An RNA of 177 nucleotides, treated with DMS and 2A3 and read out base by base. High 2A3 reactivity points to a flexible backbone, as in loops and unpaired stretches. The RNA was probed in 150 mM KOAc, 10 mM MgCl2 and 150 mM bicine (pH 8.5) at 24 C. Source: RMDB library M2PK90, as collected in RNAgym.
RNA sequence: GGGAACGACUCGAGUAGAGUCGAAAAAAGGUGCCAUCAUAUCGGUUAAGAACUCUUAACUCUCAUGGCUUUCGAGUUAUGUGGUGCAUUGAAGCUCUCCCUUCAAAUGGUCGUACAGUUCCGUGAAGCUCUAAUGGACAUUCGUGUCCAUUAGAGCAAAAGAAACAACAACAACAAC
Reactivity to DMS in 0.01 (KOAc 150mM, MgCl2 10mM, bicine 150mM(pH8.5), 24C), signal-to-noise 2, nucleotides 027 to 126: a060a080g030g010u010g000c040c050a050u010c070a070u000a080u000c090g010g060u000u000a040a040g030a110a120c300u020c010u010u000a020a020c020u000c040u000c060a050u000g020g000c040u010u010u020c070g010a020g010u010u000a030u010g000u000g010g020u000g020c070a060u010u010g000a110a120g000c070u000c030u000c030c040c000u000u000c090a010a030a060u000g000g010u000c080g000u000a040c120a070g000u000u000c010c010g010u020g000a090a110
Reactivity to 2A3 in 0.01 (KOAc 150mM, MgCl2 10mM, bicine 150mM(pH8.5), 24C), signal-to-noise 1, nucleotides 027 to 126: a020a000g060g010u000g010c010c000a040u030c030a020u040a040u170c070g000g000u030u020a040a020g030a230a180c040u000c000u170u000a010a010c020u000c000u020c090a060u050g000g000c000u020u060u010c100g010a040g040u080u030a050u060g000u030g010g050u030g040c070a070u020u100g070a060a010g000c010u050c040u040c070c000c010u000u030c050a060a060a070u100g010g020u030c010g010u020a050c010a110g010u090u050c010c010g060u100g060a040a010